[RMDB]
RNA sequence: GGGAACGACUCGAGUAGAGUCGAAAAGAAAGAAAGAAAGCUGACCCUUCUGCUGACGGAUCUUGUGGAGCACCACAGUGCAGAAGGGGAGAGAAGCUUUAAUGACGACCGUCUGGGCAGCCUUGAAAAAACGGAUUCUUCUUCGGAAGAAUCCGAACAAAAUAGAGCUGUUCGCAGCUCUAUUUUGAAAAGAAACAACAACAACAAC
Reactivity to 2A3 in 0.01 (KOAc 150mM, MgCl2 10mM, bicine 150mM(pH8.5), 24C), signal-to-noise 1, nucleotides 027 to 156: g070a000a020a000g030a020a090a010g080a020a050a000g010c050u100g140a150c000c000c000u000u010c000u000g010c030u020g070a050c100g110g040a110u140c070u190u060g010u070g020g080a130g070c050a140c040c000a000c010a040g030u040g060c000a000g000a020a000g010g010g000g000a000g020a010g000a010a010g000c000u000u000u050a080a040u090g060a020c000g010a050c020c030g030u030c030u080g000g020g000c020a050g010c020c000u060u140g090a130a090a020a010a000a040c010g000g000a000u000u010c000u000u000c000u040u020c180g080g000a000a000g000a000a000u000c000c010g000a000a000
Reactivity to DMS in 0.01 (KOAc 150mM, MgCl2 10mM, bicine 150mM(pH8.5), 24C), signal-to-noise 1, nucleotides 027 to 156: g040a060a070a160g030a090a110a180g010a010a020a050g000c010u010g000a170c000c000c000u000u000c000u000g000c000u000g020a150c150g010g000a070u000c010u010u000g010u000g000g000a200g030c240a060c020c010a080c000a080g050u000g010c010a010g010a010a000g010g040g000g000a060g000a120g010a170a060g020c030u010u010u000a010a150u000g010a080c000g000a120c040c050g020u010c080u000g020g030g040c060a030g020c030c010u010u000g000a020a110a090a040a100a080c040g000g000a020u000u000c010u000u000c020u000u000c300g040g000a030a020g000a010a010u000c000c010g010a020a030